Structure probing data (2A3 and DMS) for a 177-nucleotide construct. Values cover nucleotides 27 to 126. For 2A3 the reverse transcriptase was SuperScript II with manganese. Values are in units of 0.01, from 0 to 300, in steps of 10. For DMS the reverse transcriptase was MarathonRT. For DMS, 1,813 sequencing reads were counted. High 2A3 reactivity points to a flexible backbone, as in loops and unpaired stretches. Conditions: 150 mM KOAc, 10 mM MgCl2 and 150 mM bicine (pH 8.5), 24 C.
RNA sequence: GGGAACGACUCGAGUAGAGUCGAAAAGAUAUGGAGAUUCAACGUGAGAACAACAGCCUCGUGUCGGAAACGACACUGAGGACAUGUUCUCUGAAUCUCCUAAGUCAAAAGCUAGCUUCGGCUAGCACAUACGACUUCGGUUCGCCGAAGUCGUAUGAAAAGAAACAACAACAACAAC
Reactivity to 2A3 in 0.01 (KOAc 150mM, MgCl2 10mM, bicine 150mM(pH8.5), 24C), signal-to-noise 2, nucleotides 027 to 126: g010a000u020a030u100g000g000a000g000a010u000u010c040a130a080c300g250u300g090a040g010a030a020c140a050a030c040a300g090c000c000u020c010g000u000g000u000c010g010g000a100a020a030c010g000a000c020a000c080u270g010a000g000g020a020c000a030u060g020u000u010c000u030c000u000g000a000a000u000c000u000c000c000u000a030a010g000u000c000a000a000a000a290g000c000u010a010g020c020u060u110c290g140g000c000u010a000g000c030a010
Reactivity to DMS in 0.01 (KOAc 150mM, MgCl2 10mM, bicine 150mM(pH8.5), 24C), signal-to-noise 2, nucleotides 027 to 126: g000a050u000a300u000g000g000a020g000a000u000u000c000a110a180c300g050u010g000a020g000a000a040c000a110a090c220a150g000c000c000u000c000g000u000g000u000c000g010g020a090a080a120c000g020a020c000a010c000u000g070a000g020g000a030c080a060u000g000u000u000c000u010c010u020g010a010a020u000c000u000c000c010u020a000a110g000u000c030a090a060a180a100g000c000u000a010g000c010u000u010c200g030g000c010u000a010g030c000a080